RNA sequence: GGGAACGACUCGAGUAGAGUCGAAAAGCAUGAUCUCGUUGGUCCCUUCCAGGAUGCGAUGCACCCGCAGGUCGCGGACGAUCUUCUCCAGACCAUACUCGCGCAGAUAGCCAUAGCCGCCGUGCAGUCGUAAUCCCCAUUUCGAUGGGGAUUACGAAAAAGAAACAACAACAACAAC
Reactivity to DMS in 0.01 (KOAc 150mM, MgCl2 10mM, bicine 150mM(pH8.5), 24C), signal-to-noise 2, nucleotides 027 to 126: g050c090a060u010g000a090u000c020u000c060g010u010u000g010g010u000c020c010c070u000u010c070c050a120g000g000a090u010g030c050g010a120u010g000c060a070c050c030c050g010c120a070g010g010u010c040g020c090g020g000a080c100g010a060u000c060u000u010c050u000c020c060a120g000a050c060c050a120u000a060c050u000c050g000c070g010c070a030g000a100u000a140g000c020c010a050u000a070g020c020c020g000c080c050g000u000g040c100a080g010
Reactivity to 2A3 in 0.01 (KOAc 150mM, MgCl2 10mM, bicine 150mM(pH8.5), 24C), signal-to-noise 1, nucleotides 027 to 126: g000c040a040u080g040a110u090c110u050c070g160u160u230g110g020u030c030c020c010u000u020c060c010a030g050g060a040u080g000c040g060a040u110g030c050a070c010c090c000g000c010a060g080g040u040c030g070c170g050g000a060c110g010a070u030c000u130u030c030u010c020c000a000g000a040c000c000a000u060a120c020u040c030g000c000g000c040a020g020a180u120a060g060c010c000a030u080a060g000c000c000g080c000c020g080u080g030c010a010g070